About this RNA
Source: RMDB library OK2TRN, as collected in RNAgym. The record gives the reactivity of an RNA of 177 nucleotides to 2A3 and DMS. The RNA was probed in 150 mM KOAc, 10 mM MgCl2 and 150 mM bicine (pH 8.5) at 24 C. The 2A3 profile rests on 10,568 reads. The DMS profile rests on 14,483 reads.
RNA sequence: GGGAACGACUCGAGUAGAGUCGAAAAACGUUAGCUCACGCAUUCUGAAUGUCAGCUUCUCUGCCCGGCGACCAGAUGUGUCCCACGAGGAGUUUUACACGCCGCAGUAUCUUCAGGAGCGAGUCUACUUAUGACCAAAUUUCGAUUUGGUCAUAAGAAAAGAAACAACAACAACAAC
Reactivity to 2A3 in 0.01 (KOAc 150mM, MgCl2 10mM, bicine 150mM(pH8.5), 24C), signal-to-noise 5, nucleotides 027 to 126: a000c050g020u040u030a020g030c010u020c030a050c040g030c090a220u130u010c020u050g080a140a080u100g050u100c050a040g000c000u060u010c030u020c030u080g070c030c050c010g040g000c100g010a020c020c010a060g040a300u100g140u040g020u050c010c000c000a030c020g010a040g040g000a010g000u050u000u020u120a040c070a010c050g080c020c030g020c020a020g030u080a070u050c030u050u030c020a020g000g030a020g020c010g000a010g020u000c010u030a070
Reactivity to DMS in 0.01 (KOAc 150mM, MgCl2 10mM, bicine 150mM(pH8.5), 24C), signal-to-noise 9, nucleotides 027 to 126: a140c110g010u000u010a080g010c040u000c040a140c090g010c040a090u000u000c030u010g010a090a070u010g010u010c200a090g010c030u000u000c040u010c030u000g020c080c100c100g000g010c100g010a060c050c040a160g010a090u010g010u010g010u000c010c000c020a150c140g010a050g000g000a060g000u000u000u000u010a060c070a080c080g020c060c050g000c080a100g010u000a040u000c050u000u000c040a070g000g000a050g000c020g000a060g010u010c050u000a110